[RMDB]
RNA sequence: GGGAACGACUCGAGUAGAGUCGAAAAGCUGGGGCUAAGCCUAGCCAGCGAAGACAUCUCCCUCGGAUGAGCCGGAGUUGUCGAUUAGCAGCUUGACUCACCGGUUGGUCCGAGUCUUGCUGCGAAAGGGAAGCUUCUCGUUCGCGAGGAGCUUCCCAAAAGAAACAACAACAACAAC
Reactivity to 2A3 in 0.01 (KOAc 150mM, MgCl2 10mM, bicine 150mM(pH8.5), 24C), signal-to-noise 8, nucleotides 027 to 126: g020c000u010g000g000g020g030c080u090a110a060g040c000c010u020a050g080c010c010a000g010c020g020a080a010g000a000c010a020u020c000u000c010c080c000u020c010g300g090a250u270g010a160g080c120c080g030g000a010g010u010u010g010u010c010g000a050u020u030a010g000c000a000g020c000u010u020g000a000c010u010c000a040c020c000g300g040u300u300g100g000u100c110c120g000a000g000u000c000u000u030g000c000u000g000c000g000a040a020a010
Reactivity to DMS in 0.01 (KOAc 150mM, MgCl2 10mM, bicine 150mM(pH8.5), 24C), signal-to-noise 3, nucleotides 027 to 126: g000c010u000g000g000g000g040c090u010a030a130g000c000c000u000a260g010c010c020a020g000c000g000a240a100g000a010c010a030u000c010u000c020c010c000u000c000g010g010a160u070g000a020g000c100c180g030g000a030g000u000u000g010u020c000g000a100u020u000a150g030c030a010g000c020u000u000g000a000c000u010c020a100c020c010g000g010u050u120g010g020u000c190c130g000a000g000u000c000u000u000g010c000u010g000c000g000a010a040a050
This 177-nucleotide RNA was probed chemically with 2A3 and DMS.
The RNA was probed in 150 mM KOAc, 10 mM MgCl2 and 150 mM bicine (pH 8.5) at 24 C.
The 2A3 profile rests on 7,169 reads.
For DMS, 5,933 sequencing reads were counted.